[RMDB]
RNA sequence: GGGAACGACUCGAGUAGAGUCGAAAAGAUAUGGACUGUGAGCUUCCGCUCUUUAAAUCCGACGAAGUGAUUCGGAAACGAAUCACAGAGGAUUUAAAGAGCGGGGAGAGCUCCACAGUCCUAAGUCGUACUCCUUGAUGUUCGCAUCAAGGAGUACAAAAGAAACAACAACAACAAC
Reactivity to DMS in 0.01 (KOAc 150mM, MgCl2 10mM, bicine 150mM(pH8.5), 24C), signal-to-noise 1, nucleotides 027 to 126: g000a090u010a300u000g010g010a000c000u010g050u000g000a300g030c000u000u020c010c010g000c000u000c040u010u000u000a000a010a000u010c000c000g000a300c230g000a090a130g030u000g010a010u000u000c000g010g010a150a030a280c000g000a030a010u000c000a010c000a050g000a140g030g000a010u010u010u010a000a020a010g000a010g000c000g000g010g000g010a300g000a000g000c000u010c120c080a010c020a030g030u000c000c000u010a020a050g000u010c080
Reactivity to 2A3 in 0.01 (KOAc 150mM, MgCl2 10mM, bicine 150mM(pH8.5), 24C), signal-to-noise 1, nucleotides 027 to 126: g040a030u180a100u300g010g000a000c010u040g020u010g000a000g000c010u300u190c050c010g000c010u030c090u000u000u000a000a030a000u090c050c030g130a270c090g090a300a010g000u020g010a000u010u010c000g080g000a090a010a050c010g000a000a000u000c000a000c010a000g000a010g000g010a000u000u000u000a010a010a000g000a020g000c000g010g010g000g040a180g020a000g000c010u110c150c000a000c010a000g010u000c000c000u000a000a000g040u000c050